[RMDB]
RNA sequence: GGGAACGACUCGAGUAGAGUCGAAAACGCGCAGGUAUGAUUUCGAAUCUAUGUUUAUGCACUCCCGUUGACUGAUUCACAGUUACGUGCAUGGAUUCGCAUAGAUAGUCAUAUCAACGGGAGCGCGGCAGACGUGUCUAUUCGUAGACACGUCUGCAAAAGAAACAACAACAACAAC
Reactivity to DMS in 0.01 (KOAc 150mM, MgCl2 10mM, bicine 150mM(pH8.5), 24C), signal-to-noise 1, nucleotides 027 to 126: c040g000c090g020c040a140g000g000u000a040u000g000a030u000u000u000c030g000a030a000u010c000u010a060u000g020u000u000u000a010u020g010c000a060c030u000c020c020c050g000u000u000g000a020c300u010g000a130u000u000c190a120c050a080g010u000u000a070c120g000u000g020c050a100u000g000g000a070u000u000c090g000c080a060u000a080g000a100u000a040g000u000c000a010u000a160u030c010a060a030c010g000g020g010a050g020c010g010c020g030
Notes
Chemical mapping of a 177-nucleotide RNA with DMS.